Conditions: 150 mM KOAc, 10 mM MgCl2 and 150 mM bicine (pH 8.5), 24 C. Structure probing data (DMS) for a 177-nucleotide construct. The DMS profile rests on 636 reads. Source: RMDB library OK2TST, as collected in RNAgym.
[RMDB]
RNA sequence: GGGAACGACUCGAGUAGAGUCGAAAAAGCUCGAGGGUGUGACGUCGGUAGGCCAAGCAAAGCAGCCAAACUUGGAAGUCAUCCAGUCGCUAGAACCUGACCUAAUUCUGGCAAGCCCUACUCGCCAAUCGUCAUGCCUUUUCGAAGGCAUGACGAUAAAAGAAACAACAACAACAAC
Reactivity to DMS in 0.01 (KOAc 150mM, MgCl2 10mM, bicine 150mM(pH8.5), 24C), signal-to-noise 1, nucleotides 027 to 126: a140g020c040u000c060g000a100g040g010g050u000g010u000g020a080c090g000u000c060g040g010u000a090g010g000c020c060a030a130g030c040a080a050a110g010c050a000g000c030c070a010a070a060c080u010u000g000g010a110a110g000u000c150a050u000c060c010a060g020u000c130g000c050u010a010g030a060a030c080c040u000g010a050c010c000u000a090a170u020u030c060u000g010g010c020a080a240g010c040c010c050u010a100c040u000c040g030c070c010a040
For DMS the reverse transcriptase was MarathonRT.